[RMDB]
The data come from the RNA Mapping Database (RMDB), library TTRDES.
Structure probing data (DMS and 2A3) for a 177-nucleotide construct.
Conditions: 150 mM KOAc, 10 mM MgCl2 and 150 mM bicine (pH 8.5), 24 C.
For 2A3 the reverse transcriptase was SuperScript II with manganese.
For DMS, 1,991 sequencing reads were counted.
RNA sequence: GGGAACGACUCGAGUAGAGUCGAAAAGAUAUGGAUCUUCGUCUUUUGACGACGUCUAACCCAUUCGGAAACGAAUGGGUAAUCGUCGAUAAGACGGGAUCCUAAGUCAAAUCUGUCUUCGGACAGACAAAAGUAUCUGCUUCGGCAGAUACUUUUGAAAAGAAACAACAACAACAAC
Reactivity to DMS in 0.01 (KOAc 150mM, MgCl2 10mM, bicine 150mM(pH8.5), 24C), signal-to-noise 2, nucleotides 027 to 126: g010a060u030a300u030g000g010a010u000c020u000u020c010g000u000c000u000u010u010u010g020a080c000g000a000c130g030u000c230u000a240a090c000c000c000a010u000u000c010g010g000a200a130a240c010g000a030a000u000g020g000g020u000a010a010u000c010g010u000c010g000a070u000a020a000g000a010c000g000g010g000a000u010c000c000u000a020a040g010u010c040a110a130a160u000c000u000g000u010c000u010u010c270g030g010a030c000a010g000a030
Reactivity to 2A3 in 0.01 (KOAc 150mM, MgCl2 10mM, bicine 150mM(pH8.5), 24C), signal-to-noise 2, nucleotides 027 to 126: g050a020u040a050u210g000g010a020u000c070u300u300c080g020u000c010u080u060u060u140g130a100c020g020a000c050g140u040c110u110a160a170c000c000c000a010u020u000c020g050g020a100a100a110c000g000a000a020u010g010g010g010u000a010a010u000c030g010u020c010g020a040u050a200a010g010a000c000g000g030g000a000u030c000c000u000a070a020g040u010c030a040a000a220u000c000u000g010u000c010u050u060c300g150g000a000c000a000g000a050